This 177-nucleotide RNA was probed chemically with DMS and 2A3. The DMS profile rests on 983 reads. 2A3 adducts were read by reverse transcription with SuperScript II with manganese. 2A3 is a SHAPE reagent: it acylates the 2'-hydroxyl of flexible nucleotides of all four kinds. Source: RMDB library TTRDEL, as collected in RNAgym.
RNA sequence: GGGAACGACUCGAGUAGAGUCGAAAAGAUAUGGAAUGGAACUACACGCGACGGACGCGACGAAGUCGGAAACGACAGAGCGUCCCAAGCGUGCCAUUCCUAAGUCAAAGGUCCGUUCGCGGACCAACGUUCAUAGCAGCUUCGGCUGCUAUGAACGAAAAGAAACAACAACAACAAC
Reactivity to DMS in 0.01 (KOAc 150mM, MgCl2 10mM, bicine 150mM(pH8.5), 24C), signal-to-noise 2, nucleotides 027 to 126: g000a040u000a300u000g010g000a040a010u010g000g000a100a070c020u030a240c040a000c000g030c000g010a300c300g000g020a020c000g050c010g010a170c130g000a130a040g000u020c010g000g000a120a070a170c000g020a000c000a010g000a100g000c000g040u000c000c000c000a030a300g000c010g000u000g000c000c000a070u000u020c000c000u020a040a060g000u000c030a070a100a140g000g020u000c000c000g000u000u020c170g000c000g000g000a040c000c000a000a020
Reactivity to 2A3 in 0.01 (KOAc 150mM, MgCl2 10mM, bicine 150mM(pH8.5), 24C), signal-to-noise 1, nucleotides 027 to 126: g020a000u050a030u170g000g010a010a000u000g000g010a080a030c060u220a040c290a000c000g000c000g020a020c030g000g000a010c020g050c000g210a220c010g060a160a000g010u010c000g020g020a120a060a060c000g000a010c020a030g040a000g010c000g000u000c000c000c000a040a010g000c000g000u000g000c010c000a000u000u020c010c000u000a100a020g030u010c070a090a020a140g000g010u010c020c000g020u030u110c300g010c010g090g010a000c000c000a010a000